[RMDB]
The record gives the reactivity of an RNA of 207 nucleotides to 2A3.
RNA sequence: GGGAACGACUCGAGUAGAGUCGAAAACUAUGAGUUCUCGAGCGUCGGAACUCGAGAGUUCGAAAGCGAGCGGUGACGCCCUCGAGGCCGAGAUCGUCCAGGUCAUCGACGCCCUCGAGUACGUCAGCGAUCGUACUGCGACCUGGCACGAUGCACGAAGGUUUUUGAACUUCGGUUCAAAAACCUUAAAAGAAACAACAACAACAAC
Reactivity to 2A3 in 0.01 (KOAc 150mM, MgCl2 10mM, bicine 150mM(pH8.5), 24C), signal-to-noise 1, nucleotides 027 to 156: c020u040a070u230g010a010g010u040u000c000u000c000g000a010g020c060g120u170c100g030g090a050a050c000u000c000g000a000g000a000g020u050u030c090g020a040a110a000g100c030g000a000g000c020g000g210u010g000a030c000g030c120c030c010u000c010g010a040g010g000c000c010g020a040g000a000u080c020g090u090c300c190a100g020g040u060c200a240u030c050g040a080c110g080c010c060c010u020c000g000a010g000u010a010c010g000u030c000a010g080c030g000a020u000c040g090u080a060c010u090g020c000g080a110c000c030u010g040g000c040a010c080g090a030u070g020c060a000c160g110